This 177-nucleotide RNA was probed chemically with 2A3 and DMS. Reactivities are given for positions 27 through 126. For DMS the reverse transcriptase was MarathonRT. The 2A3 profile rests on 7,630 reads.
RNA sequence: GGGAACGACUCGAGUAGAGUCGAAAAGACUACAGCCACCAGUCGAGAUCUCCACAAGCGAACCACCAGGCGGGCAGUGUGGCCGGCGUGCGGGAUUGGGAGUGGGGCGGCUGCUCCGACAACAUCGUCGUAGGUAUUUAUUCGUAAAUACCUACGAAAAAGAAACAACAACAACAAC
Reactivity to 2A3 in 0.01 (KOAc 150mM, MgCl2 10mM, bicine 150mM(pH8.5), 24C), signal-to-noise 4, nucleotides 027 to 126: g040a020c060u070a040c140a030g020c010c010a030c010c010a030g110u010c010g010a020g010a170u020c020u000c030c010a030c010a050a070g080c010g050a060a030c000c010a000c020c010a030g110g040c000g050g080g000c050a050g030u040g030u050g280g000c020c020g090g010c050g000u040g000c100g000g000g040a060u040u070g090g060g000a060g050u050g010g030g010g050c060g020g000c020u020g000c010u010c020c010g040a040c020a080a020c010a070u130c070g100
Reactivity to DMS in 0.01 (KOAc 150mM, MgCl2 10mM, bicine 150mM(pH8.5), 24C), signal-to-noise 7, nucleotides 027 to 126: g010a140c070u010a130c060a070g020c010c000a090c050c030a060g010u000c030g020a300g010a070u010c020u010c020c020a040c070a230a200g010c040g000a100a100c040c020a040c060c050a130g010g020c040g000g000g020c040a120g010u000g030u000g000g010c060c030g010g020c070g020u000g000c130g010g000g010a080u010u010g010g010g000a130g010u000g010g010g010g000c090g000g000c030u010g000c030u000c010c010g000a040c050a030a040c050a080u010c180g000